[RMDB]
RNA sequence: GGGAACGACUCGAGUAGAGUCGAAAACGCCCCGCCCGGUCGGGAUGGGCCGCAGUUCCCGACGAGGAGCCCGCAGGUGGGAGGAUCAGCCACCGGAGGGGACGCGAUGCCAAAGAGUGGGGGAAAUUAGGCUUGGACUUCGGUCCAAGCAAAAGAAACAACAACAACAAC
Reactivity to 2A3 in 0.01 (KOAc 150mM, MgCl2 10mM, bicine 150mM(pH8.5), 24C), signal-to-noise 4, nucleotides 027 to 129: c070g030c000c000c000c000g000c000c000c000g140g120u140c070g030g010g000a040u050g010g020g000c020c020g030c010a060g020u040u010c010c000c000g010a010c010g000a050g020g000a040g000c030c020c000g010c070a010g010g080u100g020g040g020a080g000g040a070u070c060a010g060c000c030a020c000c010g060g010a010g000g030g000g030a000c000g000c040g030a070u160g090c040c000a080a120a000g030a010g020u070g000g000g000g010g040a000a070a050u130u090a070g050
Reactivity to DMS in 0.01 (KOAc 150mM, MgCl2 10mM, bicine 150mM(pH8.5), 24C), signal-to-noise 4, nucleotides 027 to 129: c120g020c000c030c020c030g000c000c000c000g060g060u020c130g000g010g000a060u070g000g010g010c040c040g070c000a180g020u030u010c050c010c000g010a050c200g010a110g030g020a110g040c120c000c050g050c060a060g020g050u090g020g070g000a070g000g000a090u080c070a080g050c030c010a140c010c030g030g020a230g060g010g000g010a000c090g000c120g070a100u060g000c030c060a120a120a000g070a040g020u030g110g010g020g020g040a070a050a060u040u040a100g010
Conditions: 150 mM KOAc, 10 mM MgCl2 and 150 mM bicine (pH 8.5), 24 C. Chemical mapping of a 170-nucleotide RNA with 2A3 and DMS. For DMS the reverse transcriptase was MarathonRT. Values cover nucleotides 27 to 129. The 2A3 profile rests on 6,531 reads. It was measured as part of the RMDB library 15KLIB.